[RMDB]
Source: RMDB library OK2TRN, as collected in RNAgym. The record gives the reactivity of an RNA of 177 nucleotides to 2A3 and DMS. The reactions ran in a buffer of 150 mM KOAc, 10 mM MgCl2 and 150 mM bicine (pH 8.5), at 24 C. The 2A3 profile rests on 1,089 reads. For 2A3 the reverse transcriptase was SuperScript II with manganese.
RNA sequence: GGGAACGACUCGAGUAGAGUCGAAAAGCAUCGCGAUGAAGCGUAAGAGCCUCAAUGCCGAACUGGGCACGUUCACAUUUCCGUCUAUAUGACGACUAUGGGAAAUACCCCAAGUUUGACAGUUACCAAUUCGAGUGAUCUUCGGAUCACUCGAAUUAAAAGAAACAACAACAACAAC
Reactivity to 2A3 in 0.01 (KOAc 150mM, MgCl2 10mM, bicine 150mM(pH8.5), 24C), signal-to-noise 1, nucleotides 027 to 126: g000c000a000u120c030g030c000g100a170u270g170a130a050g000c010g060u080a080a050g050a020g170c000c020u040c020a040a090u070g000c020c000g020a000a000c010u010g000g020g000c040a040c180g030u050u050c010a010c000a020u060u040u040c120c040g020u000c030u050a300u020a060u300g000a000c000g000a020c010u020a050u000g000g040g000a010a000a010u090a020c020c000c010c020a040a040g010u000u040u000g000a000c020a050g000u000u130a040c040c000
Reactivity to DMS in 0.01 (KOAc 150mM, MgCl2 10mM, bicine 150mM(pH8.5), 24C), signal-to-noise 2, nucleotides 027 to 126: g010c070a060u010c040g020c030g000a150u010g000a150a120g030c040g000u020a090a110g000a160g000c030c030u000c120a070a100u000g010c000c000g000a030a020c020u000g000g000g000c030a070c220g000u010u000c000a030c000a030u000u000u000c040c000g020u000c010u010a120u000a060u030g000a010c010g000a030c040u000a010u000g000g000g010a030a030a020u000a200c300c000c000c070a010a090g010u000u000u010g010a020c040a040g000u000u000a130c090c070